[RMDB]
RNA sequence: GGGAACGACUCGAGUAGAGUCGAAAAAGUUACAUAUGACUCAGUCAACAGAAUCAAACUAACUCAUUGGCUGUCCCCUCAGAGUUAGAGGAGUCUCGCCACAAGUGUCCACCAUGCUGGAACCGUCAACAUGUAGUUGUUUCGACAACUACAUGUUAAAAGAAACAACAACAACAAC
Reactivity to DMS in 0.01 (KOAc 150mM, MgCl2 10mM, bicine 150mM(pH8.5), 24C), signal-to-noise 9, nucleotides 027 to 126: a050g010u010u010a090c140a120u010a100u010g010a040c030u010c030a090g010u000c070a060a100c220a070g000a060a050u000c090a070a080a140c120u010a030a040c030u000c040a130u010u000g010g010c050u000g000u000c030c040c000c120u000c100a080g000a040g010u000u000a040g010a090g000g010a080g000u000c030u000c090g010c050c030a050c140a060a060g010u000g020u000c040c030a060c060c080a050u010g020c070u000g000g010a070a090c040c070g000u010c140
Reactivity to 2A3 in 0.01 (KOAc 150mM, MgCl2 10mM, bicine 150mM(pH8.5), 24C), signal-to-noise 6, nucleotides 027 to 126: a000g060u060u080a080c050a070u220a080u240g020a020c010u010c080a020g090u040c020a030a030c040a170g090a100a080u130c060a080a060a090c030u050a020a010c020u010c040a080u070u070g040g000c020u050g070u070c010c020c010c000u010c030a100g040a030g050u060u110a020g020a040g030g020a030g040u010c030u030c100g050c020c010a040c010a080a030g020u040g030u110c010c010a010c000c010a060u100g010c020u010g050g020a040a020c010c020g050u080c020
Annotation:
This 177-nucleotide RNA was probed chemically with DMS and 2A3. High 2A3 reactivity points to a flexible backbone, as in loops and unpaired stretches. 2A3 adducts were read by reverse transcription with SuperScript II with manganese. Reactivities are given for positions 27 through 126. Conditions: 150 mM KOAc, 10 mM MgCl2 and 150 mM bicine (pH 8.5), 24 C.